Conditions: 150 mM KOAc, 10 mM MgCl2 and 150 mM bicine (pH 8.5), 24 C. Chemical mapping of a 207-nucleotide RNA with DMS and 2A3. For DMS the reverse transcriptase was MarathonRT. Values cover nucleotides 27 to 156. The DMS profile rests on 2,855 reads.
RNA sequence: GGGAACGACUCGAGUAGAGUCGAAAAAUGUCUUCCUGGAAAUGAAUAUACCAUAUUCUGUUGUACGAGGAGAACAGAUCCAAUUGAAAGGAACUGUUUACAACUAUAGGACUUCUGGGAUGCAGGUAAGUAGGUGUUAAUAUUUAUGGGAUAAAGGAUCCUCUUGAAUGUUCGCAUUCAAGAGGAUAAAAGAAACAACAACAACAAC
Reactivity to DMS in 0.01 (KOAc 150mM, MgCl2 10mM, bicine 150mM(pH8.5), 24C), signal-to-noise 2, nucleotides 027 to 156: a110u000g020u000c070u000u000c010c000u010g020g000a060a110a120u010g000a100a090u000a070u000a150c040c050a140u000a090u000u010c040u010g030u010u000g020u000a100c070g010a110g030g030a150g010a060a020c010a030g020a140u090c010c030a060a180u010u000g020a120a150a300g000g000a040a080c010u010g040u000u000u010a050c050a090a050c070u000a110u000a080g020g000a090c070u000u000c010u010g020g010g020a070u000g020c090a090g000g010u000a030a080g000u000a020g010g020u000g000u000u000a050a110u000a040u000u000u000a080u000g030g080g010a090u000a040a050a200g000g000
Reactivity to 2A3 in 0.01 (KOAc 150mM, MgCl2 10mM, bicine 150mM(pH8.5), 24C), signal-to-noise 3, nucleotides 027 to 156: a000u060g020u060c030u050u000c030c020u040g030g040a030a050a060u130g020a100a000u060a010u040a110c030c060a060u030a080u170u050c050u090g070u060u020g010u040a060c070g010a030g080g020a070g000a030a000c000a020g020a040u000c010c010a050a150u200u250g080a240a100a030g020g010a040a010c010u000g000u020u040u030a030c030a030a000c000u050a020u090a200g050g010a040c010u050u010c010u060g010g020g010a010u010g040c010a000g040g000u060a070a020g020u030a000g010g040u040g000u080u040a070a000u050a060u100u110u010a050u150g060g000g010a020u150a080a040a110g300g010
Source: RMDB library OK3TST, as collected in RNAgym.